[RMDB]
RNA sequence: GGGAACGACUCGAGUAGAGUCGAAAAGAAUUGGUAUGUAAGCUACGACUUCCGGUAGCUGCGUCACACUUUAAGAGUGUGCAUACUGAGCCGAAGCUCAGCUUCGGUCCCCCAAGGGAAGCCCAAAGACUAUCCAGCAGUUCGCUGCUGGAUAGUCAAAAGAAACAACAACAACAAC
Reactivity to DMS in 0.01 (KOAc 150mM, MgCl2 10mM, bicine 150mM(pH8.5), 24C), signal-to-noise 2, nucleotides 027 to 126: g000a060a070u010u000g040g000u010a010u030g000u000a300a180g000c000u000a000c010g000a090c030u010u010c020c000g010g000u010a000g020c000u000g030c000g050u020c000a000c000a000c000u000u030u060a080a050g000a010g020u000g000u000g000c000a020u000a000c000u030g000a000g000c040c010g030a030a000g000c050u110c280a200g020c010u000u000c000g030g010u020c070c030c000c160c090a060a030g040g000g000a020a000g000c100c000c110a080a110a100
Reactivity to 2A3 in 0.01 (KOAc 150mM, MgCl2 10mM, bicine 150mM(pH8.5), 24C), signal-to-noise 5, nucleotides 027 to 126: g080a020a110u010u010g000g000u000a000u000g010u000a010a010g000c000u010a000c010g070a070c020u000u010c000c000g000g020u010a000g000c000u000g000c000g000u000c000a000c000a000c000u050u120u300a300a090g230a010g260u000g000u000g010c000a000u000a010c000u010g010a000g000c000c000g010a000a000g000c020u060c300a040g010c010u030u000c000g000g000u000c020c000c010c000c000a030a040g100g000g000a000a000g000c000c010c010a070a050a000